Description: The record gives the reactivity of an RNA of 207 nucleotides to 2A3 and DMS. DMS adducts were read by reverse transcription with MarathonRT. The RNA was probed in 150 mM KOAc, 10 mM MgCl2 and 150 mM bicine (pH 8.5) at 24 C. Values cover nucleotides 27 to 156.

RNA sequence: GGGAACGACUCGAGUAGAGUCGAAAAUCAUUAUUGGCUGUGUUGAAUUUUGUUUUUAGUUCUCUUUUAUAAGGUCUGUAGUCUUACUUUCAGUGAGGAAGUGUUUUCUCAGGUUCUCAAGAAAGUAACAAAAUGCCAGCAUUGUCAAGGUCACCAACUCCCUAAUAGUAUUCGUACUAUUAGGGAGAAAAGAAACAACAACAACAAC
Reactivity to 2A3 in 0.01 (KOAc 150mM, MgCl2 10mM, bicine 150mM(pH8.5), 24C), signal-to-noise 5, nucleotides 027 to 156: u070c010a010u020u230a050u080u040g020g000c010u010g010u010g010u060u020g040a050a050u010u030u050u030g050u020u060u020u060u090a090g040u200u030c050u040c000u050u090u040u070a240u080a100a040g040g010u010c020u030g140u140a020g040u050c020u030u060a020c010u060u020u050c050a120g080u040g220a080g070g010a010a020g020u020g080u120u080u150u020c050u010c030a030g050g070u160u080c040u020c040a030a010g020a010a040a010g030u040a000a010c010a010a040a010a000u090g120c150c000a000g000c010a010u010u030g010u010c010a020a050g040g010u090c020a010c180c010a030a080
Reactivity to DMS in 0.01 (KOAc 150mM, MgCl2 10mM, bicine 150mM(pH8.5), 24C), signal-to-noise 2, nucleotides 027 to 156: u010c050a100u000u010a100u010u000g010g010c010u000g020u000g020u010u000g010a070a060u000u000u000u000g010u000u000u000u000u010a070g030u010u000c040u000c010u000u000u010u000a060u020a080a080g010g000u010c010u000g020u010a080g000u000c040u010u010a010c010u000u000u000c010a120g030u000g010a090g010g010a020a070g020u000g000u000u010u000u010c050u000c060a090g030g020u000u000c030u000c060a080a180g000a030a050a040g000u010a020a050c030a020a040a030a040u000g010c100c030a030g000c030a050u000u000g020u000c030a050a080g000g030u000c030a080c040c030a050a240